Conditions: 150 mM KOAc, 10 mM MgCl2 and 150 mM bicine (pH 8.5), 24 C. The record gives the reactivity of an RNA of 177 nucleotides to DMS and 2A3. It was measured as part of the RMDB library TTRDEL. The DMS profile rests on 2,187 reads. Reactivities are rounded to 0.1 and cut off at 0 and 3. For DMS the reverse transcriptase was MarathonRT. Reactivities are given for positions 27 through 126.
[RMDB]
RNA sequence: GGGAACGACUCGAGUAGAGUCGAAAAGAUAUGGACUGGUCGAGUCGGUGGUCGGAAACGACCAUCCGACGAUGAGACCAGGUCCUAAGUCAAAACGUUAAUCAACCGUUCGCGGUUGAUUAACGAAGCUAGAUACGGUGUUCGCACCGUAUCUAGCAAAAGAAACAACAACAACAAC
Reactivity to DMS in 0.01 (KOAc 150mM, MgCl2 10mM, bicine 150mM(pH8.5), 24C), signal-to-noise 3, nucleotides 027 to 126: g000a050u010a300u010g000g000a170c000u000g020g000u000c000g010a150g020u000c000g010g040u000g000g020u000c010g000g000a100a050a210c000g020a000c010c000a020u000c000c010g010a010c020g010a060u000g000a290g000a030c020c000a010g050g000u000c010c000u000a060a100g000u000c030a070a140a100a160c010g010u000u000a000a010u000c000a020a000c000c000g020u000u020c260g020c030g010g000u010u000g000a000u000u000a010a000c010g010a040a040
Reactivity to 2A3 in 0.01 (KOAc 150mM, MgCl2 10mM, bicine 150mM(pH8.5), 24C), signal-to-noise 2, nucleotides 027 to 126: g000a000u040a040u170g000g010a000c000u020g040g000u020c020g040a020g020u000c010g020g010u010g000g000u000c010g020g050a040a090a060c020g000a000c000c000a020u080c020c000g000a010c020g000a030u080g050a050g000a000c000c010a000g040g010u030c000c010u050a120a020g080u050c030a050a020a070a150c020g000u010u000a000a010u010c010a000a010c020c010g050u090u070c300g000c000g120g000u000u000g010a000u000u000a000a000c000g010a010a020